The data come from the RNA Mapping Database (RMDB), library OK1LIB.
An RNA of 177 nucleotides, treated with 2A3 and DMS and read out base by base.
[RMDB]
RNA sequence: GGGAACGACUCGAGUAGAGUCGAAAAGGGAUCAGUUUAGAAACAGAUGGGUAUUACAAAAUCCAUUUAGGCAAGAAGGUACAUAUAAGCAACUGUUUACCUUUAGCAAAUACGAUUUUAACGACACGUCCAACAAAUACUUCGGUAUUUGUUGGACAAAAGAAACAACAACAACAAC
Reactivity to 2A3 in 0.01 (KOAc 150mM, MgCl2 10mM, bicine 150mM(pH8.5), 24C), signal-to-noise 3, nucleotides 027 to 126: g020g000g050a030u020c030a000g070u000u040u230a130g030a010a110a000c000a000g040a020u020g010g000g020u040a070u150u220a140c100a070a070a040a020u010c000c000a000u030u010u070a140g040g010c110a200a010g030a070a020g090g090u150a060c090a060u230a040u040a080a050g040c010a000a100c020u020g060u090u140u130a120c000c000u050u030u050a050g000c050a000a040a090u230a060c050g040a080u030u100u070u300a210a120c030g000a000c000a000c220
Reactivity to DMS in 0.01 (KOAc 150mM, MgCl2 10mM, bicine 150mM(pH8.5), 24C), signal-to-noise 2, nucleotides 027 to 126: g010g000g020a040u000c000a160g010u020u020u050a050g040a020a070a140c020a050g000a030u010g000g040g050u000a110u150u080a050c300a000a010a060a000u030c000c020a070u000u000u000a050g000g000c000a230a070g010a030a020g010g000u000a000c130a050u010a120u060a090a100g050c240a030a100c220u000g000u000u020u020a090c000c000u000u000u000a300g000c040a130a030a100u000a190c050g040a030u000u000u000u000a100a020c080g070a050c150a090c210
High 2A3 reactivity points to a flexible backbone, as in loops and unpaired stretches.
The reactions ran in a buffer of 150 mM KOAc, 10 mM MgCl2 and 150 mM bicine (pH 8.5), at 24 C.